[RMDB]
RNA sequence: GGGAACGACUCGAGUAGAGUCGAAAAGGGUGAUCGUUCGCGAUCACCCAAAGAAGCACGAAACGCCAAGAAAUCCCGGAACAUUGGUAUGGAACCCUGAGAAAACUGACAAGUUCGCUUGUCAGAACGUUUGUACUUGGUUCGCCAAGUACAAACGAAAAGAAACAACAACAACAAC
Reactivity to DMS in 0.01 (KOAc 150mM, MgCl2 10mM, bicine 150mM(pH8.5), 24C), signal-to-noise 2, nucleotides 027 to 126: g000g000g030u000g020a010u010c000g040u000u010c210g000c040g040a010u000c000a010c000c000c000a010a030a040g000a180a130g040c050a050c160g000a110a130a140c110g000c000c000a050a030g000a070a080a080u000c000c030c000g000g020a050a050c060a070u000u010g000g000u000a120u030g030g000a040a120c000c030c030u000g000a120g000a060a100a070a150c020u000g000a000c000a000a000g010u000u010c270g000c000u000u000g000u000c020a000g010a070a040
Overview
Structure probing data (DMS) for a 177-nucleotide construct. The RNA was probed in 150 mM KOAc, 10 mM MgCl2 and 150 mM bicine (pH 8.5) at 24 C.